[RMDB]
RNA sequence: GGGAACGACUCGAGUAGAGUCGAAAAUAAACUACUAUGCCUCGACGAGCCCUAAACAACAUAUGUUAUGUCACAAUUCCUCCCUUGUCCGGGCAAGAACUAUUUGAUAGUCAUAGGUUUAGCAUCUACAAUGCAGAAACAAUUGUACAACGCAAAGCAUCCGUACCCUUUUCGAAGGGUACGGAUGAAAAGAAACAACAACAACAAC
Reactivity to 2A3 in 0.01 (KOAc 150mM, MgCl2 10mM, bicine 150mM(pH8.5), 24C), signal-to-noise 2, nucleotides 027 to 156: u090a040a000a040c040u040a010c040u050a050u160g000c000c010u030c000g010a000c000g010a010g010c000c000c070u090a090a030a030c040a070a010c000a150u090a060u170g180u070u190a130u240g110u170c050a030c110a130a100u230u190c020c000u020c000c040c000u030u040g010u130c080c030g050g010g000c030a010a000g030a010a040c020u050a000u060u110u130g100a100u140a010g030u010c010a040u050a070g030g000u020u200u080a030g020c010a030u000c010u010a040c030a020a020u000g080c040a050g090a030a090a000c050a150a010u060u060g040u030a070c070a060a000c080g060c040a060a010a050g050
Reactivity to DMS in 0.01 (KOAc 150mM, MgCl2 10mM, bicine 150mM(pH8.5), 24C), signal-to-noise 1, nucleotides 027 to 156: u010a060a160a040c050u000a140c040u020a090u000g030c020c020u000c200g000a010c000g010a070g010c020c000c040u000a100a090a120c020a010a060c070a040u010a080u000g020u010u000a080u000g020u000c020a150c150a050a230u000u000c010c000u010c020c050c010u000u000g000u000c080c100g000g040g070c050a110a110g010a070a030c030u000a090u000u010u000g010a110u000a070g000u010c040a110u020a080g000g020u010u000u000a110g020c060a080u000c010u000a040c050a020a110u000g000c000a090g000a080a080a160c140a020a160u010u010g000u010a100c040a060a090c110g000c040a050a110a140g040